Structure probing data (DMS and 2A3) for a 177-nucleotide construct. The data come from the RNA Mapping Database (RMDB), library OK2TRN. For DMS the reverse transcriptase was MarathonRT. Conditions: 150 mM KOAc, 10 mM MgCl2 and 150 mM bicine (pH 8.5), 24 C.
RNA sequence: GGGAACGACUCGAGUAGAGUCGAAAAGAGGAAAUAUAGGUGGCUGAAAUGCACCAGGAUGACGGUGAUAAGGAAUAUCGGCAGGCUUUAGCUACAACGGAACAUAGACUCUCAAAGCUUGAAAUGCCUUCGAGGAAGUAUUCGUACUUCCUCGAAGAAAAGAAACAACAACAACAAC
Reactivity to DMS in 0.01 (KOAc 150mM, MgCl2 10mM, bicine 150mM(pH8.5), 24C), signal-to-noise 2, nucleotides 027 to 126: g000a060g020g000a060a080a040u000a100u000a120g020g030u000g010g000c020u000g000a080a070a080u000g020c060a070c030c010a110g020g000a090u010g000a090c110g020g000u000g000a100u010a090a080g000g020a050a110u000a050u000c060g020g000c050a050g000g010c030u000u000u000a050g010c040u000a050c080a050a070c090g000g010a050a040c100a100u030a110g010a050c040u000c060u010c080a050a070a070g010c000u000u010g010a060a080a100u020g000c060
Reactivity to 2A3 in 0.01 (KOAc 150mM, MgCl2 10mM, bicine 150mM(pH8.5), 24C), signal-to-noise 2, nucleotides 027 to 126: g090a020g050g090a030a080a000u220a040u100a090g080g020u040g030g050c030u030g020a050a030a060u120g020c010a020c010c020a020g050g070a040u080g010a010c060g060g000u050g020a060u050a130a070g120g000a090a030u090a060u130c060g010g020c040a010g000g020c040u060u020u100a000g040c020u020a010c020a170a030c040g070g000a010a020c040a000u050a050g030a050c010u000c000u010c040a090a080a020g000c000u040u030g030a020a070a030u110g070c000